[RMDB]
RNA sequence: GGGAACGACUCGAGUAGAGUCGAAAAUUGUGGUCAAGACCUUGGCGUAGUAUCCAAGGUUGUCAAGGUUCCUAUUGACUUAACUAUGAUUGAGUUUAUGUUAUGGUGUAAGGAUGGACAGGGGAAACCCCAAAUCCAGAUUCGUCUGGAUUUGGGGAAAAGAAACAACAACAACAAC
Reactivity to DMS in 0.01 (KOAc 150mM, MgCl2 10mM, bicine 150mM(pH8.5), 24C), signal-to-noise 2, nucleotides 027 to 126: u000u020g020u000g010g000u000c070a080a140g000a030c010c010u000u000g000g000c250g000u010a190g060u010a140u000c000c010a010a010g010g000u000u000g000u010c050a030a040g020g020u000u000c040c010u000a090u000u000g010a080c000u010u000a030a060c050u000a060u020g000a060u010u000g010a110g020u020u000u000a030u000g020u000u000a050u010g030g000u000g010u010a020a070g000g010a080u000g000g000a050c040a060g010g000g010g000a100a080a130